[RMDB]
RNA sequence: GGGAACGACUCGAGUAGAGUCGAAAACUUCCCUCCCCCGGCUAGCUGCUUCUUCUUGUUCUCGAGGGCCUUCCUUCGUCGGUGAUCCUGCCUCUCCCUGUCGGUGAAUCCUCCCCUGAGAGGCCUCAAGCAGUACUCUUCGGAGUACUGAAAAGAAACAACAACAACAAC
Reactivity to DMS in 0.01 (KOAc 150mM, MgCl2 10mM, bicine 150mM(pH8.5), 24C), signal-to-noise 9, nucleotides 027 to 129: c300u010u000c000c010c030u010c010c000c000c020c010g040g040c040u030a050g030c020u030g020c020u000u010c030u030u010c060u010u010g000u010u000c020u010c020g000a140g000g010g030c070c040u010u000c030c040u000u030c050g030u000c050g000g030u010g000a080u030c000c030u000g000c070c000u000c000u000c010c050c040u030g020u000c070g010g020u020g020a090a110u000c030c010u000c000c000c000c020u000g000a060g010a040g010g020c030c010u000c070a120a120g020
Reactivity to 2A3 in 0.01 (KOAc 150mM, MgCl2 10mM, bicine 150mM(pH8.5), 24C), signal-to-noise 9, nucleotides 027 to 129: c020u020u020c000c000c000u010c000c000c000c000c000g010g020c040u060a040g010c020u050g020c000u040u040c000u050u010c010u060u120g060u080u030c040u020c040g050a100g010g030g020c000c010u050u050c030c000u040u070c030g110u010c020g030g050u050g040a070u050c000c010u030g030c010c000u010c010u010c000c010c000u050g080u090c050g010g040u060g070a020a040u030c010c000u030c000c010c000c000u020g040a060g000a010g060g010c000c020u070c030a030a020g050